[RMDB]
RNA sequence: GGGAACGACUCGAGUAGAGUCGAAAAACGUUGAUAUGGAUUUACUCCGAGGAGACGAACUACCACGAACAGGGGUAACUCUACCCGUGGCGUCUCCGUUUGACGAGUAAGUCCUCAGUCAACAUGCACACAAUCGUCUUCGGACGAUUGAAAAGAAACAACAACAACAAC
Reactivity to DMS in 0.01 (KOAc 150mM, MgCl2 10mM, bicine 150mM(pH8.5), 24C), signal-to-noise 5, nucleotides 027 to 129: a050c170g000u000u000g010a030u010a000u080g000g000a000u020u010u010a010c030u030c040c000g020a030g050g000a070g030a010c020g020a110a070c120u010a270c000c000a030c000g050a070a280c130a050g020g000g010g010u000a010a030c040u000c030u040a120c130c130c010g030u000g000g030c040g000u030c020u000c020c020g010u030u040u050g020a150c300g000a000g000u030a030a000g000u050c020c010u000c000a050g020u020c000a000a000c000a110u040g060c060a040c120a070
Reactivity to 2A3 in 0.01 (KOAc 150mM, MgCl2 10mM, bicine 150mM(pH8.5), 24C), signal-to-noise 8, nucleotides 027 to 129: a020c070g000u000u000g000a000u010a040u130g000g000a000u000u000u000a000c000u000c000c010g010a060g000g000a000g020a000c000g020a050a030c080u180a090c070c000a010c000g040a110a020c050a140g010g020g000g050u110a100a100c010u010c030u060a050c020c020c000g000u000g000g000c020g000u000c000u000c010c000g000u040u040u090g020a020c010g000a000g000u000a000a000g010u000c000c000u000c010a020g020u000c000a000a000c010a020u130g080c060a030c010a010